An RNA of 207 nucleotides, treated with DMS and 2A3 and read out base by base. For DMS the reverse transcriptase was MarathonRT. For 2A3 the reverse transcriptase was SuperScript II with manganese.
RNA sequence: GGGAACGACUCGAGUAGAGUCGAAAACUCGACCAGCGACGAGAUCACGGGCGAGGGCAUCUUCAUCCGUGUGCCGCUGAUGGUCAGCGAUGAGGCGACGAUCAAGGACAUCGAGGCCGGCAAGCAGCAGCUGUCCGCCGGCUAUACCUGCGAUCUCCUUCAUAGACAUGUUCGCAUGUCUAUGAAGAAAAGAAACAACAACAACAAC
Reactivity to DMS in 0.01 (KOAc 150mM, MgCl2 10mM, bicine 150mM(pH8.5), 24C), signal-to-noise 4, nucleotides 027 to 156: c000u000c020g030a030c020c010a060g010c020g010a050c010g000a090g010a240u000c010a020c000g010g030g040c010g000a050g030g030g030c210a110u000c020u010u000c020a040u000c010c000g030u010g020u010g010c080c010g010c010u000g010a080u000g010g010u000c010a090g000c040g000a090u000g030a160g010g020c050g020a110c060g020a080u010c040a120a140g010g010a160c060a100u000c030g010a270g010g030c020c010g030g020c000a070a080g010c040a090g040c180a150g020c080u000g040u000c030c050g010c010c000g000g010c010u000a030u000a050c040c030u000g020c050g000a090u000c020u000c010
Reactivity to 2A3 in 0.01 (KOAc 150mM, MgCl2 10mM, bicine 150mM(pH8.5), 24C), signal-to-noise 5, nucleotides 027 to 156: c020u030c030g020a030c010c020a020g020c020g070a080c030g030a060g040a210u090c010a000c020g000g000g010c020g000a020g000g010g030c090a200u140c050u050u020c020a030u020c000c010g000u030g020u060g060c010c000g000c040u060g030a080u110g020g020u020c030a020g040c030g110a130u140g040a040g080g030c030g020a040c080g010a030u030c050a040a030g050g020a030c010a050u080c100g040a080g060g000c010c010g000g000c030a050a040g000c020a010g020c040a040g030c030u040g060u120c070c070g010c000c000g000g000c000u010a010u030a030c000c000u030g010c070g030a020u000c010u000c010